[RMDB]
An RNA of 177 nucleotides, treated with 2A3 and read out base by base. Values cover nucleotides 27 to 126. The 2A3 profile rests on 629 reads.

RNA sequence: GGGAACGACUCGAGUAGAGUCGAAAAGUUCAUGGGUAUGCAUGCCUACGUUAGCAUUGUGAAAAUAAUGUCUAAGGUCGCCCUUCCUCCUGCUCUGAUCCUUACCUGGCUGAGAAUCAGCGGUGCCCACCGCCCACAUGUUCGCAUGUGGGCGGUGAAAAGAAACAACAACAACAAC
Reactivity to 2A3 in 0.01 (KOAc 150mM, MgCl2 10mM, bicine 150mM(pH8.5), 24C), signal-to-noise 1, nucleotides 027 to 126: g130u070u010c070a050u170g000g000g070u060a070u160g080c030a030u110g000c030c020u050a070c120g000u000u070a080g000c000a050u050u050g090u020g110a020a050a050a020u120a020a020u090g010u010c000u000a050a010g030g020u030c010g060c050c000c000u000u120c000c000u000c000c000u000g020c000u010c000u030g130a080u070c000c000u030u030a130c000c000u000g040g000c010u020g010a010g090a160a060u040c020a000g010c060g010g000u030g030c000c010